[RMDB]
RNA sequence: GGGAACGACUCGAGUAGAGUCGAAAACGCCAGACAGCAGUCACAGAAACUAGAUCUCACACUCCGUCAGGUCGGAUGUGACAGCGAGAAAGCGAGCGCAAACUCAAGCGUUACGUACGAGUGGCGAAAAUAUAUUUUUAUUCGUAAAAAUAUAUUUAAAAGAAACAACAACAACAAC
Reactivity to DMS in 0.01 (KOAc 150mM, MgCl2 10mM, bicine 150mM(pH8.5), 24C), signal-to-noise 9, nucleotides 027 to 126: c040g010c000c010a030g010a240c220a090g010c020a090g000u000c010a000c030a040g010a150a100a120c090u010a090g010a030u010c000u000c210a050c030a110c190u050c170c140g000u010c200a040g000g010u000c000g000g020a100u000g010u000g010a010c000a050g010c010g000a060g010a140a300a140g010c010g010a090g010c010g010c010a050a090a070c150u030c130a080a230g010c020g020u020u020a060c050g030u000a030c220g010a100g000u000g000g000c000g000a130
Reactivity to 2A3 in 0.01 (KOAc 150mM, MgCl2 10mM, bicine 150mM(pH8.5), 24C), signal-to-noise 8, nucleotides 027 to 126: c020g010c000c000a030g030a120c060a020g010c010a010g000u000c000a010c000a010g120a070a220a050c040u100a090g010a030u010c000u010c020a020c000a030c080u160c100c080g030u030c030a010g000g020u020c000g010g020a010u020g000u000g010a000c010a010g010c000g010a050g060a090a060a000g020c010g000a010g000c010g000c030a100a080a160c080u100c150a110a040g000c000g030u080u090a070c010g010u070a020c060g030a070g100u030g010g010c000g050a040
An RNA of 177 nucleotides, treated with DMS and 2A3 and read out base by base. 2A3 adducts were read by reverse transcription with SuperScript II with manganese. It was measured as part of the RMDB library OK1LIB. Reactivities are rounded to 0.1 and cut off at 0 and 3. The reactions ran in a buffer of 150 mM KOAc, 10 mM MgCl2 and 150 mM bicine (pH 8.5), at 24 C.